[RMDB]
RNA sequence: GGGAACGACUCGAGUAGAGUCGAAAAUCCUCACGUUUCGACGUGAGGAGAACACUAGCAAGGGAAGGGAACCCUCGGGAAGGGCUCCCAAGGCGAUCUCAACAAGGGCCAAAUUCGUUUGGCCCAACUACAAUCUCGGUUUCGACCGAGAUUGUAGAAAAGAAACAACAACAACAAC
Reactivity to DMS in 0.01 (KOAc 150mM, MgCl2 10mM, bicine 150mM(pH8.5), 24C), signal-to-noise 2, nucleotides 027 to 126: u000c000c000u000c000a020c010g000u000u010u020c150g000a020c000g030u010g000a010g000g000a000g010a050a100c120a080c120u000a130g040c110a070a050g010g020g010a180a090g000g010g030a000a040c010c020c010u020c050g030g020g010a160a120g000g020g000c020u000c000c000c000a030a060g010g010c040g020a100u000c020u000c030a080a100c240a090a130g000g000g040c000c000a000a020a020u000u000c210g020u000u000u000g000g000c000c000c000a010a030
Reactivity to 2A3 in 0.01 (KOAc 150mM, MgCl2 10mM, bicine 150mM(pH8.5), 24C), signal-to-noise 2, nucleotides 027 to 126: u010c000c000u000c010a000c010g020u020u070u100c190g110a020c020g000u010g000a000g000g010a010g010a020a020c060a020c070u080a050g050c070a090a070g080g030g060a050a090g060g020g010a050a040c000c000c010u030c040g180g020g070a030a020g040g010g000c030u010c000c000c010a010a010g000g040c010g040a080u050c040u020c040a050a160c030a110a200g000g000g000c000c010a010a010a040u160u100c230g070u020u000u000g000g000c000c010c000a000a000